[RMDB]
RNA sequence: GGGAACGACUCGAGUAGAGUCGAAAAGAUAUGGACGCUCGUGGGAGCCUAAGGGUCGGAAACGACCCGAUGGGCGAAGAACACGUGCGUCCUAAGUCAAAACGCUGCGAACUUCGGUUCGCAGCGACCAUUAUAACCGCUUCGGCGGUUAUAAUGGAAAAGAAACAACAACAACAAC
Reactivity to DMS in 0.01 (KOAc 150mM, MgCl2 10mM, bicine 150mM(pH8.5), 24C), signal-to-noise 2, nucleotides 027 to 126: g010a030u000a050u000g000g000a020c010g040c000u000c000g040u000g000g010g030a130g040c000c010u010a190a240g000g000g020u000c000g010g000a000a010a020c000g020a020c000c000c000g000a020u020g000g020g020c010g000a050a140g030a170a250c010a010c000g010u010g010c000g000u010c000c000u010a000a090g000u000c000a100a120a130a180c040g040c000u000g000c000g000a000a000c020u010u020c300g040g010u000u000c000g010c030a010g000c000g000a020
Reactivity to 2A3 in 0.01 (KOAc 150mM, MgCl2 10mM, bicine 150mM(pH8.5), 24C), signal-to-noise 1, nucleotides 027 to 126: g010a010u000a010u030g010g000a010c000g030c010u000c030g010u040g000g070g110a300g010c000c020u020a010a070g040g020g010u010c030g040g020a140a000a000c010g010a000c060c130c030g040a040u130g020g000g020c000g030a160a110g040a010a000c030a010c000g000u000g030c010g000u000c000c000u010a000a000g000u000c000a150a000a000a020c010g000c020u050g030c010g020a000a000c020u040u120c300g130g000u040u030c000g000c020a000g010c000g000a000
An RNA of 177 nucleotides, treated with DMS and 2A3 and read out base by base.
DMS adducts were read by reverse transcription with MarathonRT.
The RNA was probed in 150 mM KOAc, 10 mM MgCl2 and 150 mM bicine (pH 8.5) at 24 C.